[RMDB]
RNA sequence: GGGAACGACUCGAGUAGAGUCGAAAAGGGAACAAGGAAACAGGAGGAGGAUCGGUAGAAAAGAGCGAGACCUCCGAUUCGAGAGCUCCUGGACUCCUCAGCUCUGGAGUCCUCCGACCCGUGAGGUGAAGGUUGAUCUUCGGAUCAACCAAAAGAAACAACAACAACAAC
Reactivity to 2A3 in 0.01 (KOAc 150mM, MgCl2 10mM, bicine 150mM(pH8.5), 24C), signal-to-noise 8, nucleotides 027 to 129: g030g010g000a090a030c040a080a060g030g000a060a050a020c020a040g030g000a020g020g010a020g010g000a020u030c020g010g040u140a040g100a060a120a040a010g090a020g050c090g020a030g050a090c020c000u000c000c000g020a020u020u020c050g020a050g010a030g130c010u010c000c020u020g020g010a020c030u010c010c010u050c030a040g030c040u040c050u040g000g010a020g020u000c000c000u020c010c020g030a040c000c000c010g030u100g030a030g000g050u070g060a110a040
Reactivity to DMS in 0.01 (KOAc 150mM, MgCl2 10mM, bicine 150mM(pH8.5), 24C), signal-to-noise 5, nucleotides 027 to 129: g010g000g030a030a010c100a060a050g010g040a050a090a150c020a070g020g020a060g000g020a030g000g000a060u040c050g000g000u050a080g030a100a040a080a090g000a090g000c050g000a060g000a070c050c010u040c000c020g000a050u000u000c070g020a130g040a120g040c040u030c010c010u020g000g040a000c080u010c000c000u030c170a110g030c130u010c060u030g030g010a040g010u000c020c020u030c000c050g030a100c040c020c010g030u060g000a040g010g000u080g000a080a090

Chemical mapping of a 170-nucleotide RNA with 2A3 and DMS. It was measured as part of the RMDB library 15KLIB. For 2A3, 20,821 sequencing reads were counted. The RNA was probed in 150 mM KOAc, 10 mM MgCl2 and 150 mM bicine (pH 8.5) at 24 C. DMS adducts were read by reverse transcription with MarathonRT. High 2A3 reactivity points to a flexible backbone, as in loops and unpaired stretches.